[RMDB]
RNA sequence: GGGAACGACUCGAGUAGAGUCGAAAAGAAAACAGAGUAUGUGCUCUGUUUAGUAAAUUAUCUUACUAACGUCUUAAAAGUUUUUGCAGGCAAAAAAAAGAAAGGAAACAAAACGACUUACGUUGUUACAGAUAAUAAUAAGGCCACUGGAUAGACACAUUAUAGCGGGAUUCGUCCCGCUAUAAUGAAAAGAAACAACAACAACAAC
Reactivity to DMS in 0.01 (KOAc 150mM, MgCl2 10mM, bicine 150mM(pH8.5), 24C), signal-to-noise 1, nucleotides 027 to 156: g000a090a080a010a020c000a040g040a060g050u000a190u020g060u000g050c000u000c010u020g000u000u000u000a040g030u000a000a090a080u000u000a060u000c030u000u000a130c000u010a080a080c040g030u000c050u000u010a030a110a160a180g000u000u000u020u000u000g020c050a020g030g020c040a000a000a050a020a120a140a110a150g010a070a030a060g000g010a200a120a060c070a020a050a030a120c030g010a080c070u000u000a040c050g010u000u000g000u010u000a260c090a180g010a120u010a030a070u000a060a160u010a060a060g000g010c020c010a030c070u000g020g020a220u000a060g000a120c060a150
Reactivity to 2A3 in 0.01 (KOAc 150mM, MgCl2 10mM, bicine 150mM(pH8.5), 24C), signal-to-noise 1, nucleotides 027 to 156: g060a000a090a000a000c000a010g010a000g010u090a130u300g120u180g050c010u000c020u000g000u020u000u000a010g000u010a000a060a130u030u040a040u000c000u020u030a010c010u050a070a000c020g020u000c100u060u070a040a110a070a230g150u070u010u000u120u180g070c070a040g100g000c060a160a010a030a000a160a000a000a000g160a060a080a000g010g040a080a080a000c020a020a170a060a000c030g100a000c030u050u090a010c020g010u010u030g030u010u000a010c050a050g040a080u050a010a020u080a060a010u070a120a000g090g010c000c000a030c000u050g020g010a010u200a100g100a090c250a010
Source information:
The record gives the reactivity of an RNA of 207 nucleotides to DMS and 2A3. High 2A3 reactivity points to a flexible backbone, as in loops and unpaired stretches. 2A3 adducts were read by reverse transcription with SuperScript II with manganese. The reactions ran in a buffer of 150 mM KOAc, 10 mM MgCl2 and 150 mM bicine (pH 8.5), at 24 C. Source: RMDB library OK3TST, as collected in RNAgym. For 2A3, 734 sequencing reads were counted.